[RMDB]
RNA sequence: GGGAACGACUCGAGUAGAGUCGAAAAGAUAUGGAUCCGAGUGGCUAGCUGGUCGGGUCGGAAACGACCCGACAGCUUGGACCCACCGGAUCCUAAGUCAAAACACAGGGACUUCGGUCCCUGUGAAGAUAUUGAAGUUGUUCGCAACUUCAAUAUCAAAAGAAACAACAACAACAAC
Reactivity to DMS in 0.01 (KOAc 150mM, MgCl2 10mM, bicine 150mM(pH8.5), 24C), signal-to-noise 4, nucleotides 027 to 126: g000a060u010a300u010g000g010a000u000c000c000g010a190g040u000g000g010c020u000a000g010c000u000g030g040u010c000g020g020g040u010c000g010g000a090a110a300c020g020a010c000c000c010g000a020c000a000g010c000u000u010g030g000a130c300c000c010a010c000c000g000g000a000u000c000c000u000a000a070g010u000c040a120a120a140a260c010a000c000a000g010g010g000a020c000u000u010c240g050g000u000c000c000c000u000g010u000g000a030a080
Reactivity to 2A3 in 0.01 (KOAc 150mM, MgCl2 10mM, bicine 150mM(pH8.5), 24C), signal-to-noise 2, nucleotides 027 to 126: g030a020u080a030u170g010g000a000u010c010c020g010a120g120u000g010g060c040u020a020g030c000u190g200g300u200c060g010g000g000u030c050g010g000a220a140a020c020g000a000c050c030c050g000a000c010a000g000c020u000u100g020g060a010c000c000c000a000c000c000g000g010a000u000c000c000u010a000a020g000u020c020a050a050a110a060c000a000c000a000g040g000g000a000c000u060u210c300g070g010u010c000c000c000u000g000u000g000a000a000
The record gives the reactivity of an RNA of 177 nucleotides to DMS and 2A3. The reactions ran in a buffer of 150 mM KOAc, 10 mM MgCl2 and 150 mM bicine (pH 8.5), at 24 C. 2A3 adducts were read by reverse transcription with SuperScript II with manganese. Source: RMDB library TTRDES, as collected in RNAgym.